[RMDB]
RNA sequence: GGGAACGACUCGAGUAGAGUCGAAAAAGCCGGUCUACGGACCGGCAAAACGUUCAUCUCGUUUUACGGGCCGCAUUAAGAUUGAAGCCAAGUAACGGGGACUUCAGACUACGACUACGGUCGUAGAUUACGCCUCCGAGUUUCGACUCGGAGGCAACAACGAGAAUAGAUUCGUCUAUUCUCGUUGAAAAGAAACAACAACAACAAC
Reactivity to DMS in 0.01 (KOAc 150mM, MgCl2 10mM, bicine 150mM(pH8.5), 24C), signal-to-noise 2, nucleotides 027 to 156: a120g010c010c000g030g000u000c010u000a080c270g080g000a000c010c010g010g010c020a000a000a020a030c060g010u000u020c120a130u010c040u000c010g000u000u000u010u000a030c010g000g000g000c000c030g000c060a070u030u000a100a150g000a170u000u020g000a050a020g000c000c000a050a050g020u000a160a100c060g010g000g040g010a090c030u010u000c020a120g010a200c020u000a010c000g000a040c030u000a110c250g160g010u010c020g010u000a010g040a110u000u000a080c120g000c000c010u010c010c000g010a040g000u000u000u010c200g010a100c020u010c000g020g000a010g010g010c000a000a010
Reactivity to 2A3 in 0.01 (KOAc 150mM, MgCl2 10mM, bicine 150mM(pH8.5), 24C), signal-to-noise 2, nucleotides 027 to 156: a000g020c020c000g010g020u000c010u030a050c190g080g010a010c000c010g000g040c020a020a000a000a000c070g040u090u050c090a210u040c050u020c020g030u010u040u060u100a020c010g010g000g010c010c010g080c070a070u180u120a130a050g090a160u090u100g050a060a000g020c000c010a100a030g010u020a040a010c020g000g000g000g060a050c020u130u070c120a050g010a140c000u010a000c000g000a000c010u030a010c200g050g000u000c010g000u000a000g000a010u040u100a050c080g000c000c000u000c000c000g000a000g010u060u070u100c130g070a020c000u000c000g000g000a000g000g000c000a000a000